[RMDB]
RNA sequence: GGGAACGACUCGAGUAGAGUCGAAAAGCAGCUUACCGGCUGGGACAUCGACAUCCUGACGGAAGACGAGGAAUCCGAACGUCGCCAGAAGGAAUUCGCAGAACGUUCAAACCUGUUCAUGGAAGCAUCCUAAAUCGACGUUCGCGUCGAUUUAGGAAAAAGAAACAACAACAACAAC
Reactivity to DMS in 0.01 (KOAc 150mM, MgCl2 10mM, bicine 150mM(pH8.5), 24C), signal-to-noise 1, nucleotides 027 to 126: g030c010a020g000c040u000u000a150c300c150g040g010c060u000g000g000g020a070c080a220u000c020g020a020c050a300u000c000c000u000g010a300c060g000g000a080a050g000a040c100g040a020g000g000a080a050u020c150c010g010a020a060c020g000u000c020g030c020c020a090g000a300a000g000g020a000a190u000u000c030g020c180a050g000a070a050c030g000u020u000c010a120a040a290c080c090u050g020u000u000c230a020u090g000g000a100a130g010c210a150